The record gives the reactivity of an RNA of 207 nucleotides to 2A3. The RNA was probed in 150 mM KOAc, 10 mM MgCl2 and 150 mM bicine (pH 8.5) at 24 C. It was measured as part of the RMDB library M2RFPK.
[RMDB]
RNA sequence: GGGAACGACUCGAGUAGAGUCGAAAAGUAUGGAUGCCACCGUGACGGCUUAAUCACACAAGUGCCAACGAUAACGAGGCGCUCGCUAUUGCUGCGUAACUGACGGCCUGACGGUCUGACGUUACAAAAAACGAAAAGUGGUUCGCCACUUUUCGAACGUUACAGUGGUCUUCGGACCACUGUAACGAAAAGAAACAACAACAACAAC
Reactivity to 2A3 in 0.01 (KOAc 150mM, MgCl2 10mM, bicine 150mM(pH8.5), 24C), signal-to-noise 2, nucleotides 027 to 156: g120u120a090u140g040g020a050u040g050c020c020a000c020c040g070u040g070a070c040g000g000c000u070u120a120a090u100c020a060c010a020c010a140a030g030u010g010c020c010a070a050c070g110a130u070a170a020c090g020a020g130g010c080g030c020u030c030g040c040u060a070u190u170g050c060u030g040c040g010u000a000a040c000u020g000a000c010g010g000c000c030u160g150a030c110g000g010u010c000u000g040a020c030g030u060u040a010c020a000a100a010a000a000a040c000g010a010a010a010a010g000u000g000g010u010u040c080g080c040c000a010c000u010u000u000u000c000g000a010a000